RNA sequence: GGGAACGACUCGAGUAGAGUCGAAAAUACUCCGGGCUGGCGUCGUAUACCAUCGUGCCCGCGAGUAGGUCGGGCAUCACGUUUCGGGGUCCGAGGGCGAUGACGACCAGAUAGAAGACGAGCCCGAGGUCACCGACUCAUUCGUGAGUCGGUGACCAAAAGAAACAACAACAACAAC
Reactivity to DMS in 0.01 (KOAc 150mM, MgCl2 10mM, bicine 150mM(pH8.5), 24C), signal-to-noise 9, nucleotides 027 to 126: u000a080c030u000c020c010g000g000g020c010u010g020g010c040g010u000c100g010u000a160u010a120c070c040a100u010c090g020u000g010c010c020c020g010c110g010a050g020u000a040g010g010u000c020g000g010g010c030a040u000c030a050c050g010u000u010u000c020g000g000g000g010u020c040c020g000a050g000g010g020c050g010a030u000g000a130c050g000a050c010c020a160g000a110u000a080g000a120a130g000a070c050g010a150g000c010c010c030g010a090
Reactivity to 2A3 in 0.01 (KOAc 150mM, MgCl2 10mM, bicine 150mM(pH8.5), 24C), signal-to-noise 9, nucleotides 027 to 126: u060a010c010u000c020c010g010g000g010c020u070g090g070c020g040u050c020g030u120a070u070a220c040c040a070u100c040g070u060g030c010c010c000g030c080g010a020g060u050a040g010g040u050c020g010g060g080c010a040u050c030a020c070g040u060u080u050c040g010g020g030g090u030c020c010g010a030g020g030g010c040g040a040u040g020a010c020g020a040c010c000a010g050a060u130a030g160a130a020g050a020c030g010a010g020c000c000c000g010a030
This 177-nucleotide RNA was probed chemically with DMS and 2A3. 2A3 adducts were read by reverse transcription with SuperScript II with manganese. The 2A3 profile rests on 22,145 reads. Values cover nucleotides 27 to 126. Values are in units of 0.01, from 0 to 300, in steps of 10. Source: RMDB library OK2TST, as collected in RNAgym.